[RMDB]
Chemical mapping of a 207-nucleotide RNA with DMS and 2A3. For DMS the reverse transcriptase was MarathonRT. For 2A3, 1,989 sequencing reads were counted.
RNA sequence: GGGAACGACUCGAGUAGAGUCGAAAAGGCUGUGUUGUGGCGGGGGCGAAACAGAAUCGACAAGGGUGUAAAGAUCGCUCUUUUACUCGGCAUGAUACCACCGUUAUCGGGUCAACAGAGUAGUUGCUAGGGGAACGGGUGUUCGCACCCGUUCCAAACGACAACUAUAGUUCGCUAUAGUUGUCGUAAAAGAAACAACAACAACAAC
Reactivity to DMS in 0.01 (KOAc 150mM, MgCl2 10mM, bicine 150mM(pH8.5), 24C), signal-to-noise 2, nucleotides 027 to 156: g040g020c020u000g010u000g020u000u010g010u020g000g030c050g030g030g060g010g020c050g020a070a090a150c090a120g020a060a120u000c020g010a100c080a070a100g010g000g010u000g000u000a050a080a140g000a080u000c070g000c020u000c020u000u010u000u000a110c050u000c000g030g000c020a100u000g000a130u000a070c030c020a150c020c020g000u010u000a050u000c060g010g000g010u000c030a070a060c090a060g010a100g020u010a120g010u000u000g000c030u000a150g030g020g030g020a030a030c000g000g000g000u010g000u010u010c300g040c030a010c000c000c000g000u000u000c000c000a010a020
Reactivity to 2A3 in 0.01 (KOAc 150mM, MgCl2 10mM, bicine 150mM(pH8.5), 24C), signal-to-noise 2, nucleotides 027 to 156: g040g000c030u010g010u010g010u120u060g020u050g040g040c070g020g010g000g020g030c040g010a040a020a010c090a040g090a040a070u100c040g040a040c060a120a070g040g010g000u030g070u110a100a120a030g070a060u120c030g010c030u020c030u040u100u030u060a100c060u050c020g010g000c030a020u090g000a010u050a040c010c010a000c030c010g040u050u060a050u090c030g000g000g030u010c000a010a020c040a020g040a010g030u120a010g010u060u040g050c030u080a050g000g090g110g000a000a000c000g000g020g000u010g020u040u040c140g010c030a000c000c000c000g000u000u000c010c000a000a010